Source: RMDB library OK2TST, as collected in RNAgym. This 177-nucleotide RNA was probed chemically with 2A3 and DMS. The reactions ran in a buffer of 150 mM KOAc, 10 mM MgCl2 and 150 mM bicine (pH 8.5), at 24 C. For 2A3, 7,379 sequencing reads were counted. For DMS the reverse transcriptase was MarathonRT.
RNA sequence: GGGAACGACUCGAGUAGAGUCGAAAAUGCAUGUUAUUUCUUUCUAUCUAGACUCUGAUUAUCUUGUUGAUUAUAGAAGGGAAGUGAGCAACACGCUAUCAUAAAGCUUGUGUCAGUGUAUUAAUGACAAUUAUCUCUUUUUCGAAAGAGAUAAUUGAAAAGAAACAACAACAACAAC
Reactivity to 2A3 in 0.01 (KOAc 150mM, MgCl2 10mM, bicine 150mM(pH8.5), 24C), signal-to-noise 7, nucleotides 027 to 126: u040g010c030a010u030g020u100u160a160u100u030u010c000u030u020u000c000u010a040u000c010u020a020g010a030c020u040c080u150g080a190u150u230a110u180c070u090u080g030u020u040g040a080u080u120a010u010a030g010a020a000g030g010g000a020a040g060u080g090a060g010c030a020a030c010a010c030g020c010u040a030u190c030a050u180a130a240a010g010c030u050u070g020u020g030u060c020a030g010u010g010u060a060u090u130a160a130u120g020a030
Reactivity to DMS in 0.01 (KOAc 150mM, MgCl2 10mM, bicine 150mM(pH8.5), 24C), signal-to-noise 9, nucleotides 027 to 126: u000g010c040a030u000g010u000u000a090u000u000u000c010u000u000u000c020u000a050u000c080u000a300g010a050c060u000c080u000g010a150u020u010a100u010c090u000u000g010u000u000g000a130u010u000a050u000a030g010a030a170g010g010g010a030a030g020u010g010a160g010c070a070a040c030a020c070g010c020u000a080u010c180a100u010a080a080a070g000c020u000u000g020u000g000u000c060a100g010u000g000u000a040u000u000a060a080u010g010a180